The data come from the RNA Mapping Database (RMDB), library RNAMAK. The record gives the reactivity of an RNA of 207 nucleotides to 2A3 and DMS. 2A3 adducts were read by reverse transcription with SuperScript II with manganese. The reactions ran in a buffer of 150 mM KOAc, 10 mM MgCl2 and 150 mM bicine (pH 8.5), at 24 C. For DMS, 2,707 sequencing reads were counted.

RNA sequence: GGGAACGACUCGAGUAGAGUCGAAAAUCCUAAGUCAACUAAGUACACAUCGAUCGAAGAUUGUCAGCUACUCGGAAACGAGUAGCUUGGAUUUAUCUUCGGGAGUGUACGAAAGUUGAUAUGGAAAAACGGCAUACGGAUUCGUCCGUAUGCCGAACACGACAUGAAGAUUCGUCUUCAUGUCGUGAAAAGAAACAACAACAACAAC
Reactivity to 2A3 in 0.01 (KOAc 150mM, MgCl2 10mM, bicine 150mM(pH8.5), 24C), signal-to-noise 2, nucleotides 027 to 156: u020c010c010u040a140a030g020u000c000a000a000c010u010a080a000g020u030a010c010a000c020a300u180c050g150a110u080c010g010a030a000g020a020u010u020g020u010c000a000g040c010u010a000c000u000c000g000g070a100a070a060c010g010a010g000u000a020g000c020u000u020g000g000a000u090u140u150a010u000c000u000u000c000g000g010g000a010g000u000g000u010a000c000g000a060a020a000g000u000u000g020a010u020a080u080g040g030a020a070a010a040a010c010g030g000c000a010u000a000c000g000g020a010u000u070c260g050u010c070c000g000u000a000u000g000c000c000g000a000a010
Reactivity to DMS in 0.01 (KOAc 150mM, MgCl2 10mM, bicine 150mM(pH8.5), 24C), signal-to-noise 2, nucleotides 027 to 156: u010c010c000u000a080a300g030u000c000a010a010c010u000a060a300g010u000a010c000a000c000a290u000c120g000a130u000c010g020a010a000g010a020u000u010g020u020c020a080g000c000u020a010c000u000c000g010g010a200a120a270c000g010a050g020u000a000g010c000u000u000g020g000a030u000u000u000a000u010c000u000u000c000g010g030g000a060g010u010g010u000a000c000g000a110a120a030g000u010u010g010a020u000a170u010g030g010a110a050a100a140a300c010g020g030c000a010u000a010c000g020g000a080u000u010c300g000u000c020c070g040u010a000u000g010c010c010g010a010a050